RNA sequence: GGGAACGACUCGAGUAGAGUCGAAAAUAAAUACCCCGUGUACAUGAACUUAUAAGACGAGUACAACGUAUGGUACAUCACAAGUAUCUUAUUAGUUUUUAAGUACCAUGUGUACAUAGACUUAUGAACUGCUUGAUAUCUUCGGAUAUCAAGCAGUAAAAGAAACAACAACAACAAC
Reactivity to DMS in 0.01 (KOAc 150mM, MgCl2 10mM, bicine 150mM(pH8.5), 24C), signal-to-noise 3, nucleotides 027 to 126: u010a090a070a200u000a140c040c000c000c160g000u020g010u000a010c040a020u000g000a140a040c030u010u000a010u020a020a010g000a030c000g000a120g010u010a040c180a090a070c210g010u000a030u020g030g000u000a000c000a080u030c210a100c300a110a100g030u000a010u000c030u000u000a070u010u020a130g000u000u000u000u010u000a040a040g000u020a040c110c090a050u000g010u000g030u000a000c030a020u000a070g020a110c160u030u000a040u000g020a100
Reactivity to 2A3 in 0.01 (KOAc 150mM, MgCl2 10mM, bicine 150mM(pH8.5), 24C), signal-to-noise 5, nucleotides 027 to 126: u130a000a040a020u140a050c000c000c000c010g000u000g010u000a020c020a020u080g040a040a000c000u040u000a020u030a100a030g030a000c010g010a030g090u060a040c020a140a020c160g130u150a090u120g040g000u020a010c010a070u110c050a060c020a200a080g070u070a060u060c010u000u020a060u050u090a040g010u000u000u010u020u120a140a040g010u050a090c010c030a050u110g020u010g010u030a000c010a020u050a020g060a070c020u100u070a070u200g060a090
This 177-nucleotide RNA was probed chemically with DMS and 2A3. 2A3 adducts were read by reverse transcription with SuperScript II with manganese. Values cover nucleotides 27 to 126.